An RNA of 207 nucleotides, treated with 2A3 and read out base by base. The 2A3 profile rests on 937 reads. The reactions ran in a buffer of 150 mM KOAc, 10 mM MgCl2 and 150 mM bicine (pH 8.5), at 24 C.
[RMDB]
RNA sequence: GGGAACGACUCGAGUAGAGUCGAAAACAACAGAGUAAGACCCUGCGCGUUAAGUGCCGCAUCAACGGGGAGUUGUGCUGCGGACGAAGGUAUUAGCAGCGGUGCAGGGUCUGCAUCCCGCUGCUGAAAAAGACGGCAGCCUUCGGGCUGCCGUCAACCUUGAAAUACAGUUCGCUGUAUUUCAAGGAAAAGAAACAACAACAACAAC
Reactivity to 2A3 in 0.01 (KOAc 150mM, MgCl2 10mM, bicine 150mM(pH8.5), 24C), signal-to-noise 1, nucleotides 027 to 156: c060a000a070c090a050g150a010g180u150a100a000g020a000c000c000c000u000g000c030g000c010g080u110u100a190a050g090u130g110c000c000g030c040a060u130c020a050a020c010g030g040g110g120a080g000u000u030g020u050g050c170u020g000c020g000g020a020c010g030a070a030g100g030u170a080u240u020a030g000c010a000g010c000g040g030u040g000c000a000g000g000g040u000c000u000g000c010a050u040c010c000c010g000c000u000g000c000u060g010a080a030a000a010a020g000a000c000g000g070c000a010g060c030c010u030u050c050g060g000g000c000u010g000c000c190g000u000c000a000a000